[RMDB]
RNA sequence: GGGAACGACUCGAGUAGAGUCGAAAAACCAGUAAGUCUGGAACCGAUUUGUGUAGCAAGUCGAAUUCGUUGCGCUUCGCCACCAGAAAGCGUCCCAGCUGCACGGCUCAUUGUUAGGUAGUCGAGAUGCUCAGUGACGUUUCGACGUCACUGAGCAAAAAGAAACAACAACAACAAC
Reactivity to DMS in 0.01 (KOAc 150mM, MgCl2 10mM, bicine 150mM(pH8.5), 24C), signal-to-noise 1, nucleotides 027 to 126: a130c010c000a100g000u000a070a090g050u030c000u010g010g000a090a100c120c020g000a140u000u000u000g050u020g050u000a080g000c040a030a020g000u030c030g050a150a120u030u010c180g030u020u000g030c080g000c020u000u000c120g010c020c020a050c020c020a080g000a050a060a160g000c080g000u010c030c040c000a120g000c000u000g000c060a110c070g020g000c040u000c040a120u020u010g020u010u000a090g000g000u000a050g000u000c050g000a110g000a110

An RNA of 177 nucleotides, treated with DMS and read out base by base. It was measured as part of the RMDB library OK2TRN. Reactivities are given for positions 27 through 126. For DMS, 930 sequencing reads were counted. The RNA was probed in 150 mM KOAc, 10 mM MgCl2 and 150 mM bicine (pH 8.5) at 24 C.